[RMDB]
RNA sequence: GGGAACGACUCGAGUAGAGUCGAAAAAGGUGGGUUAAAGCCGGUGAGCCGUACAUUGAGCUCACAACAGGGAUGAUGCAAGGCAUACUGCAUUACAGCUCAUCACUGUAUCAUUCUGCAAUUAUAAUAGUCCCUAAUCAUUCGUGAUUAGGGACUAAAAAGAAACAACAACAACAAC
Reactivity to DMS in 0.01 (KOAc 150mM, MgCl2 10mM, bicine 150mM(pH8.5), 24C), signal-to-noise 3, nucleotides 027 to 126: a080g020g030u010g010g000g010u020u000a060a090a200g000c070c050g010g020u000g020a020g000c000c010g030u010a120c300a180u000u000g000a110g010c010u000c010a030c010a140a010c060a070g000g010g000a010u000g000a030u010g000c010a050a090g030g000c050a180u000a110c180u000g000c010a030u010u000a100c190a100g000c040u000c050a020u000c040a040c030u000g010u000a060u020c090a070u010u000c040u000g000c110a090a090u010u000a090u000a060a190
Reactivity to 2A3 in 0.01 (KOAc 150mM, MgCl2 10mM, bicine 150mM(pH8.5), 24C), signal-to-noise 1, nucleotides 027 to 126: a000g180g020u070g020g060g050u120u140a180a040a020g000c020c000g010g010u020g010a000g000c000c000g060u030a010c030a140u050u120g000a010g020c000u000c030a000c000a010a000c020a010g020g050g030a010u000g000a010u050g040c010a030a020g030g000c020a070u130a260c050u160g000c010a000u060u090a050c030a040g030c000u000c010a010u020c020a060c050u030g070u090a060u040c010a040u020u000c000u070g080c040a060a240u260u160a070u300a200a090